[RMDB]
RNA sequence: GGGAACGACUCGAGUAGAGUCGAAAAAGCGGCGUGGUUACGACCACGCCGCAGGGACGAUGGCUGCAAGGAAGUGCUUCGCGCACGGGCUAUUCCGACGAACUGGUCGGUAUACGUACCGACCAGAUAUAUCGUAGAAGUUCGCUUCUACGAUAUAAAAAGAAACAACAACAACAAC
Reactivity to DMS in 0.01 (KOAc 150mM, MgCl2 10mM, bicine 150mM(pH8.5), 24C), signal-to-noise 5, nucleotides 027 to 126: a090g020c010g020g040c010g140u000g020g010u000u000a110c220g010a120c030c000a010c010g010c010c000g000c000a010g000g000g010a100c300g000a040u000g000g010c030u000g010c110a120a110g000g000a090a090g010u000g010c020u000u010c160g020c150g000c030a040c020g000g010g010c010u000a110u000u010c010c010g000a200c120g020a120a210c020u000g000g000u000c000g010g010u000a010u000a050c190g000u000a000c000c000g000a020c000c000a000g000a070
Reactivity to 2A3 in 0.01 (KOAc 150mM, MgCl2 10mM, bicine 150mM(pH8.5), 24C), signal-to-noise 7, nucleotides 027 to 126: a010g000c000g000g000c010g020u050g030g050u130u120a170c300g060a030c100c000a000c000g000c000c000g000c000a000g000g000g000a020c050g050a050u060g010g010c040u060g010c120a100a100g120g060a170a070g060u020g080c030u050u120c170g060c030g000c040a010c030g000g010g000c010u040a050u130u060c030c020g040a060c070g010a190a100c000u000g010g000u000c010g010g010u010a030u010a020c240g020u010a010c000c000g000a000c000c000a010g000a000
The record gives the reactivity of an RNA of 177 nucleotides to DMS and 2A3. Conditions: 150 mM KOAc, 10 mM MgCl2 and 150 mM bicine (pH 8.5), 24 C. DMS (dimethyl sulfate) methylates the pairing face of unpaired adenines and cytosines. Reactivities are given for positions 27 through 126. 2A3 adducts were read by reverse transcription with SuperScript II with manganese. Source: RMDB libraries RFM100 and RFMREP, as collected in RNAgym. DMS adducts were read by reverse transcription with MarathonRT.